[RMDB]
RNA sequence: GGGAACGACUCGAGUAGAGUCGAAAAUAGUACACUUCGAGGCAAUGUACUAAGUCCUUUGUACAAACCGAAGAGUCUUAUGAAUCAGUCUUUGACUUGUCUCCAUUUUCCAGAGGAGGAAACCAAGGCCAGGAGUUUAAGUGACUUGCCUAAGCUCUCAUUAGUCAGAUUUCGAUCUGACUAAUGAAAAAGAAACAACAACAACAAC
Reactivity to DMS in 0.01 (KOAc 150mM, MgCl2 10mM, bicine 150mM(pH8.5), 24C), signal-to-noise 3, nucleotides 027 to 156: u000a030g000u000a050c020a020c030u000u000c030g020a300g040g030c120a110a080u000g000u000a020c020u000a060a200g020u000c040c020u010u020u010g020u010a160c060a090a140a110c030c040g010a090a100g000a080g000u000c030u000u000a150u040g010a100a110u000c060a120g000u000c020u010u000u000g010a050c020u010u020g010u010c010u010c020c010a160u000u000u000u000c100c040a160g010a150g000g000a090g010g010a050a060a080c100c030a030a080g020g020c000c040a090g010g010a060g030u010u010u000a020a080g020u010g010a110c120u000u010g000c010c050u000a060a080g000c050u000c040
Reactivity to 2A3 in 0.01 (KOAc 150mM, MgCl2 10mM, bicine 150mM(pH8.5), 24C), signal-to-noise 7, nucleotides 027 to 156: u080a000g050u060a020c030a010c030u060u080c070g040a070g010g010c040a040a050u040g010u030a010c010u050a020a030g080u080c030c010u070u050u100g100u050a100c080a110a120a050c050c030g040a070a030g020a020g040u010c020u060u150a150u130g100a090a060u110c030a030g100u010c020u040u100u120g040a030c010u040u040g020u050c010u000c010c020a090u060u070u090u080c040c030a030g010a050g150g010a020g010g010a040a010a020c050c020a050a020g010g010c000c030a020g050g020a040g030u090u150u100a090a020g030u050g060a040c000u010u050g010c000c010u030a060a040g030c020u020c000